The record gives the reactivity of an RNA of 177 nucleotides to 2A3 and DMS.
The 2A3 profile rests on 1,767 reads.
The RNA was probed in 150 mM KOAc, 10 mM MgCl2 and 150 mM bicine (pH 8.5) at 24 C.
[RMDB]
RNA sequence: GGGAACGACUCGAGUAGAGUCGAAAAACGAUGUCGUUCGCGACAUCGUAAAUUGUAUAACCUUGCAUGAAGUCUACUUGGUUGUAAAGCGAGACAAGUCAGUGAGAGUCCUAUUCGUAGGACUCAAGUAACGUUCCUUGUUCGCAAGGAACGUUACAAAAGAAACAACAACAACAAC
Reactivity to 2A3 in 0.01 (KOAc 150mM, MgCl2 10mM, bicine 150mM(pH8.5), 24C), signal-to-noise 2, nucleotides 027 to 126: a020c010g000a010u000g000u010c010g010u050u030c200g010c020g090a010c010a000u000c010g000u000a000a040a000u090u050g060u010a090u030a110a060c030c050u010u110g010c050a100u110g060a090a020g060u000c000u000a030c040u060u050g080g030u080u030g050u180a090a040a000g090c090g060a040g030a050c010a100a060g050u060c040a040g050u030g160a190g000a000g060u000c000c000u000a020u010u070c170g040u030a000g000g000a000c000u000c000a000a000
Reactivity to DMS in 0.01 (KOAc 150mM, MgCl2 10mM, bicine 150mM(pH8.5), 24C), signal-to-noise 2, nucleotides 027 to 126: a020c000g010a000u010g010u000c000g030u000u020c180g020c010g010a010c010a000u000c010g020u000a000a040a090u000u010g020u010a040u010a080a080c020c010u010u000g010c050a130u000g010a090a100g010u000c010u000a070c020u000u000g000g020u000u000g020u000a090a050a070g010c080g000a070g000a050c050a030a090g010u010c050a070g000u010g000a150g000a030g000u000c000c000u000a020u000u020c160g000u000a000g010g000a010c000u000c010a020a060